[RMDB]
RNA sequence: GGGAACGACUCGAGUAGAGUCGAAAAAAGACUAGAGUUUUAGUCGUCGUUAAUUCCCAAGAUGUCUAUAAGAGUCUUACCAUAGUUGACAUUCCACAGAGUUUGACUUUUUCAUAUGAUGGGUUACAGAGUAGCACGUUCGCGUGCUACAAAAGAAACAACAACAACAAC
Reactivity to DMS in 0.01 (KOAc 150mM, MgCl2 10mM, bicine 150mM(pH8.5), 24C), signal-to-noise 4, nucleotides 027 to 129: a000a020g010a000c030u030a000g010a220g040u060u040u040u010a040g020u010c000g050u020c160g030u060u010a040a210u000u000c040c010c010a090a080g000a070u000g040u000c030u050a070u000a110a150g010a040g000u040c050u000u000a150c000c000a160u020a070g050u020u020g010a170c130a000u030u010c130c120a000c100a000g010a140g000u080u000u000g000a030c120u040u000u040u040u010c110a070u000a070u000g010a030u030g000g000g000u050u010a090c140a000g010a150
Reactivity to 2A3 in 0.01 (KOAc 150mM, MgCl2 10mM, bicine 150mM(pH8.5), 24C), signal-to-noise 2, nucleotides 027 to 129: a000a000g000a020c000u000a000g020a070g190u120u070u040u000a000g010u000c010g030u000c000g030u030u220a100a000u040u030c000c000c000a030a000g060a080u170g060u160c060u000a010u040a140a040g000a030g000u050c010u010u000a000c000c000a010u090a020g020u000u100g060a050c010a190u170u180c010c000a120c020a040g020a000g030u000u070u000g060a000c000u000u070u050u010u040c080a110u180a120u160g050a020u010g010g020g010u030u010a050c130a030g070a000